[RMDB]
RNA sequence: GGGAACGACUCGAGUAGAGUCGAAAAGGUAAGCUUAAUUGUAGUUUCCAGGACGCUGCCUCUAAUAUCUUUGUUAUUAACAAGGACACUUAUGCAGCUCUUAGAAACUCUUUAACUAAUGAUGCCUAGCGAUCUGCCUUCGGGCAGAUCAAAAGAAACAACAACAACAAC
Reactivity to 2A3 in 0.01 (KOAc 150mM, MgCl2 10mM, bicine 150mM(pH8.5), 24C), signal-to-noise 7, nucleotides 027 to 129: g040g020u070a030a060g040c130u020u050a030a030u110u060g080u150a040g000u000u000u000c000c030a000g010g000a000c110g000c000u000g010c000c000u000c000u000a020a020u010a030u050c000u010u000u020g030u040u090a300u200u230a170a000c000a000a000g000g000a000c010a000c110u000u000a000u160g000c000a000g000c000u010c000u000u000a000g000a000a000a000c000u000c000u010u020u030a020a020c030u030a090a050u110g130a050u120g020c020c010u040a040g080c020
Reactivity to DMS in 0.01 (KOAc 150mM, MgCl2 10mM, bicine 150mM(pH8.5), 24C), signal-to-noise 5, nucleotides 027 to 129: g040g010u020a100a100g030c180u000u000a000a010u000u030g000u000a040g120u020u030u040c000c080a030g000g010a030c190g090c020u010g010c010c040u040c010u030a010a050u050a180u020c090u010u000u080g020u050u050a250u050u070a130a000c000a030a020g030g010a000c000a060c300u020u020a020u050g040c010a020g000c000u010c010u010u030a040g050a020a000a010c040u040c030u010u010u000a020a050c060u000a000a150u030g060a230u070g010c040c010u060a060g030c130
An RNA of 170 nucleotides, treated with 2A3 and DMS and read out base by base. The reactions ran in a buffer of 150 mM KOAc, 10 mM MgCl2 and 150 mM bicine (pH 8.5), at 24 C. For 2A3 the reverse transcriptase was SuperScript II with manganese. The 2A3 profile rests on 12,190 reads. The data come from the RNA Mapping Database (RMDB), library 15KLIB.